[RMDB]
The record gives the reactivity of an RNA of 177 nucleotides to 2A3. The reactions ran in a buffer of 150 mM KOAc, 10 mM MgCl2 and 150 mM bicine (pH 8.5), at 24 C.

RNA sequence: GGGAACGACUCGAGUAGAGUCGAAAAAACGCAUUAGCUGUCCGCUCUCAGGUUGGGCAGUCAGGGUCGGAGAAGGGCAAUGACUCAUUCUUAAAACCAGCGUUCUUAAGACCAAAGAGUCGGGCGGACGCCUUAGCCUCUUCGGAGGCUAAGGCGUAAAAGAAACAACAACAACAAC
Reactivity to 2A3 in 0.01 (KOAc 150mM, MgCl2 10mM, bicine 150mM(pH8.5), 24C), signal-to-noise 1, nucleotides 027 to 126: a010a000c050g000c110a140u130u000a010g030c000u000g000u000c000c000g160c000u070c000u100c070a130g060g080u300u130g280g000g000c000a050g000u000c000a100g000g100g000u030c130g160g040a060g020a080a080g020g000g120c210a000a200u290g140a280c040u000c050a070u070u030c000u010u080a100a100a070a000c050c040a000g000c020g000u000u000c060u010u010a010a000g000a000c000c000a000a000a060g000a000g000u000c000g000g000g000c080g070g040

Values cover nucleotides 27 to 126.